[RMDB]
RNA sequence: GGGAACGACUCGAGUAGAGUCGAAAAGAAAGAGUCUUUUUCGAAAUUUAGGCAACCAUAAGAAUGACAAUGUAAUACAGUAAUUAUUGCCGCUCUUAUGAUUGCACGAAUUUCGCAGAAGCGGCAAAAGUGAUUGUAUGUUCGCAUACAAUCACUUAAAAGAAACAACAACAACAAC
Reactivity to 2A3 in 0.01 (KOAc 150mM, MgCl2 10mM, bicine 150mM(pH8.5), 24C), signal-to-noise 9, nucleotides 027 to 126: g150a010a080a000g100a010g060u210c010u000u010u000u010u010c010g000a010a010a020u020u020u020a120g060g000c000a010a000c000c000a010u000a010a000g010a010a020u040g020a020c010a020a040u070g080u180a090a060u130a140c110a070g150u260a130a090u180u100a020u010u010g010c010c000g000c010u000c000u000u010a010u010g020a020u000u010g000c000a000c020g000a000a000u000u000u000c000g000c010a010g000a020a000g020c050g060g030c090a120a120
Reactivity to DMS in 0.01 (KOAc 150mM, MgCl2 10mM, bicine 150mM(pH8.5), 24C), signal-to-noise 5, nucleotides 027 to 126: g020a110a080a110g010a110g010u040c000u010u000u000u000u000c000g010a000a010a000u000u000u000a080g010g000c000a010a010c040c000a010u010a010a010g000a020a020u010g010a050c000a010a010u010g010u030a070a050u040a150c260a150g030u040a080a080u020u000a020u010u000g000c020c000g020c050u000c000u000u000a010u000g010a060u000u000g000c000a020c020g010a010a010u000u000u000c010g010c110a010g000a010a010g000c030g010g010c210a050a050